[RMDB]
Source: RMDB library TTRDEL, as collected in RNAgym.
Structure probing data (DMS and 2A3) for a 177-nucleotide construct.
Reactivities are given for positions 27 through 126.
The RNA was probed in 150 mM KOAc, 10 mM MgCl2 and 150 mM bicine (pH 8.5) at 24 C.
DMS adducts were read by reverse transcription with MarathonRT.
The 2A3 profile rests on 4,162 reads.
For DMS, 4,905 sequencing reads were counted.
RNA sequence: GGGAACGACUCGAGUAGAGUCGAAAAGAUAUGGACCACGUAGAGAUUGAGCAUUCCCUCGGAAACGAGGGAAAUGCAAUGAUGUGUAGUGGUCCUAAGUCAAAACGGCUCGCUUCGGCGAGCCGAACUAAGGCAUAACGUUCGCGUUAUGCCUUAGAAAAGAAACAACAACAACAAC
Reactivity to DMS in 0.01 (KOAc 150mM, MgCl2 10mM, bicine 150mM(pH8.5), 24C), signal-to-noise 4, nucleotides 027 to 126: g000a030u000a150u020g000g000a020c000c000a010c000g010u000a230g010a150g010a080u000u000g000a180g010c000a030u000u000c010c000c000u000c000g010g000a010a030a050c000g000a010g000g010g010a000a000a000u000g020c010a140a110u010g010a060u000g000u010g020u010a150g020u000g010g000u000c000c000u000a000a070g000u000c020a040a060a100a190c020g020g000c000u010c000g010c000u000u020c190g010g010c000g020a000g030c000c000g010a000a060
Reactivity to 2A3 in 0.01 (KOAc 150mM, MgCl2 10mM, bicine 150mM(pH8.5), 24C), signal-to-noise 3, nucleotides 027 to 126: g010a000u010a010u060g000g000a000c000c010a010c050g090u270a140g070a090g040a300u090u240g080a040g030c000a020u020u000c000c000c000u010c010g000g010a030a020a010c010g000a020g020g030g010a000a000a010u010g000c000a030a270u130g020a050u050g060u000g080u230a210g010u020g000g000u000c010c000u000a010a000g010u000c000a020a050a050a110c010g010g000c010u020c000g010c010u090u050c300g160g000c010g000a030g020c000c000g000a000a020